[RMDB]
Chemical mapping of a 207-nucleotide RNA with 2A3 and DMS. The reactions ran in a buffer of 150 mM KOAc, 10 mM MgCl2 and 150 mM bicine (pH 8.5), at 24 C. The 2A3 profile rests on 2,000 reads. For DMS the reverse transcriptase was MarathonRT.
RNA sequence: GGGAACGACUCGAGUAGAGUCGAAAAGAAAACAGCUAAAGGAGUUUGAUAUGCCGUUGACCGUUGACAUCUGCUGGAUGAGGCAGGACUUGCAUCGUGUUAAGUCCAGAGGGCUCCUGUCAGGUGCUAAGCUGGAUCUGAUGGUGUCAUAACGCCAGAUAGGCGCUAAUUUCGAUUAGCGCCUAUCAAAAGAAACAACAACAACAAC
Reactivity to 2A3 in 0.01 (KOAc 150mM, MgCl2 10mM, bicine 150mM(pH8.5), 24C), signal-to-noise 4, nucleotides 027 to 156: g030a010a080a000a030c050a020g030c120u240a090a050a090g060g010a050g020u060u060u130g070a090u090a080u200g040c040c030g040u030u030g040a060c000c020g010u000u030g010a040c000a060u000c000u050g010c010u050g050g040a110u110g010a050g050g020c020a020g030g040a010c020u020u060g010c030a090u140c190g070u030g040u250u170a060a020g010u030c030c010a000g010a010g040g050g010c010u000c000c000u020g060u080c010a000g010g030u010g010c050u040a020a040g020c030u060g070g010a070u000c030u070g030a060u080g010g000u020g010u020c040a040u110a170a030c020g020c020c000a010
Reactivity to DMS in 0.01 (KOAc 150mM, MgCl2 10mM, bicine 150mM(pH8.5), 24C), signal-to-noise 2, nucleotides 027 to 156: g040a090a070a110a120c020a070g000c030u000a080a060a050g020g000a050g020u000u000u010g040a130u000a070u020g020c000c010g050u000u000g010a080c000c050g000u000u020g010a100c060a060u010c000u000g000c020u000g010g010a080u010g010a190g000g030c020a130g010g010a050c030u000u000g010c050a210u010c080g030u030g010u010u000a030a240g040u000c010c020a050g000a100g040g020g000c040u000c020c010u000g030u020c040a050g030g030u000g010c020u000a030a090g030c030u020g000g010a120u010c040u010g040a060u000g020g030u000g000u010c070a100u020a030a110c040g010c010c010a170